[RMDB]
RNA sequence: GGGAACGACUCGAGUAGAGUCGAAAAGGUGACCGUGGCUGCCAAGUGUCAGGACGGCCGCCCGCCCCCACACCCACCCCUAGGAGCUCUGCAAACAGCUGCACGCCAAGAUCGAUGCGGCUGAAGAGGAGAAGUACGACAUGGAGGUGAGGGUGCAUAGCGAAAAUUUAUUCGUAAAUUUUCGCUAAAAAGAAACAACAACAACAAC
Reactivity to 2A3 in 0.01 (KOAc 150mM, MgCl2 10mM, bicine 150mM(pH8.5), 24C), signal-to-noise 1, nucleotides 027 to 156: g000g000u020g010a010c040c000g010u040g060g150c010u020g020c030c040a300a060g150u090g050u260c000a000g000g010a010c000g000g000c010c000g000c010c010c000g110c050c000c000c020c000a010c000a010c000c000c000a000c000c020c000c000u020a110g000g050a060g010c000u000c000u010g050c000a080a060a020c040a030g000c000u000g000c000a010c030g010c040c020a160a000g000a060u040c000g100a100u010g000c000g000g000c000u000g040a050a000g030a020g010g030a030g010a030a000g020u040a000c090g010a000c020a080u050g000g000a080g100g010u010g050a220g050g000g000u010g080c070a160
Reactivity to DMS in 0.01 (KOAc 150mM, MgCl2 10mM, bicine 150mM(pH8.5), 24C), signal-to-noise 1, nucleotides 027 to 156: g020g010u010g010a060c030c010g030u000g030g090c010u010g030c000c030a270a060g010u050g030u000c030a060g010g010a080c000g000g020c010c020g010c000c010c080g020c080c020c000c060c070a030c010a050c000c000c020a050c000c020c040c020u000a220g010g010a180g010c040u000c030u000g040c070a140a300a250c000a030g060c010u000g010c000a020c040g010c080c100a130a230g020a180u000c020g010a140u010g000c000g010g010c000u020g020a040a100g030a300g030g000a060g000a080a150g010u000a120c050g030a300c010a130u000g010g030a040g000g040u000g000a170g000g010g000u000g000c120a150